[RMDB]
RNA sequence: GGGAACGACUCGAGUAGAGUCGAAAAUCGGACGGCGGCCAUGAGUCGCAACGCAAAGCCGCGACAAGUGGAGUUAGCGAGAAGAGACUAGGCUUUGGUUUCUUCAAGUGAAGCGGUCACCAAUCAGAAUAGCUUGCGCAGUUCGCUGCGCAAGCAAUACUGUGUAAAACUUCGGUUUUACACAGUAAAAAGAAACAACAACAACAAC
Reactivity to DMS in 0.01 (KOAc 150mM, MgCl2 10mM, bicine 150mM(pH8.5), 24C), signal-to-noise 1, nucleotides 027 to 156: u000c130g000g000a110c060g050g040c000g040g000c020c000a040u000g000a300g020u000c000g000c000a040a040c030g020c130a160a170a230g040c040c010g030c000g010a050c050a070a300g050u000g060g000a120g030u030u000a210g050c000g010a300g000a090a020g000a040g000a020c000u000a040g010g010c090u010u000u000g000g030u000u000u010c020u030u000c020a000a300g010u010g000a120a110g010c030g000g010u000c000a060c020c030a070a180u000c030a120g000a070a140u000a080g070c000u030u010g000c020g000c000a030g000u000u000c230g120c040u010g000c000g000c020a010a000g000c010a020a040
Reactivity to 2A3 in 0.01 (KOAc 150mM, MgCl2 10mM, bicine 150mM(pH8.5), 24C), signal-to-noise 2, nucleotides 027 to 156: u090c020g070g030a000c040g090g010c000g000g030c000c000a040u070g010a020g030u020c000g000c020a030a010c040g000c100a190a180a020g070c080c060g020c000g010a010c010a030a010g010u040g020g050a110g050u080u090a030g020c040g010a030g010a030a000g020a000g000a000c000u040a050g190g150c070u160u190u200g040g000u000u000u020c000u000u000c020a020a000g020u030g080a090a030g000c040g040g030u010c030a040c090c000a020a070u190c030a030g130a210a110u160a050g000c000u000u010g000c010g000c000a020g030u100u130c160g000c140u000g000c000g000c000a000a000g000c000a000a000
Structure probing data (DMS and 2A3) for a 207-nucleotide construct. The 2A3 profile rests on 1,475 reads. In probing experiments dimethyl sulfate is read out at A N1 and C N3, which are open when not base-paired. The reactions ran in a buffer of 150 mM KOAc, 10 mM MgCl2 and 150 mM bicine (pH 8.5), at 24 C. Values are in units of 0.01, from 0 to 300, in steps of 10. DMS adducts were read by reverse transcription with MarathonRT.